[RMDB]
RNA sequence: GGGAACGACUCGAGUAGAGUCGAAAAUGAUCGACAAAAACGCGCUCAGCUAUCCGUGGCUUGAGAGCGCGCCUGCGCUCAACCGCGAUUUCCUUUUCGACAGCUAUCGUCUUCAGGCCGAGCGUGAUAUGGGGUAAAUCUUCGGAUUUACCCCAUAAAAAGAAACAACAACAACAAC
Reactivity to DMS in 0.01 (KOAc 150mM, MgCl2 10mM, bicine 150mM(pH8.5), 24C), signal-to-noise 2, nucleotides 027 to 126: u010g010a050u000c110g000a070c280a100a060a030a130a100c070g010c010g010c010u000c000a020g000c020u010a080u010c180c070g010u000g000g020c100u010u010g010a100g010a020g000c000g030c060g010c210c190u000g020c020g030c010u000c020a100a100c090c060g000c030g020a110u000u010u010c050c040u000u000u000u000c130g010a050c070a080g000c110u000a090u010c090g000u000c060u000u000c080a120g000g000c030c020g000a030g010c020g020u000g000a140
Reactivity to 2A3 in 0.01 (KOAc 150mM, MgCl2 10mM, bicine 150mM(pH8.5), 24C), signal-to-noise 1, nucleotides 027 to 126: u140g040a080u090c010g070a000c100a020a170a010a000a030c030g000c010g010c010u000c010a000g000c010u020a060u140c100c000g070u060g020g040c120u030u120g150a030g000a010g220c010g000c010g030c020c030u060g000c000g020c020u030c030a060a020c020c020g000c010g040a000u000u050u030c000c020u020u030u010u150c020g020a020c020a020g010c030u110a100u240c040g000u000c100u150u070c030a010g020g000c000c050g000a020g030c000g000u000g020a010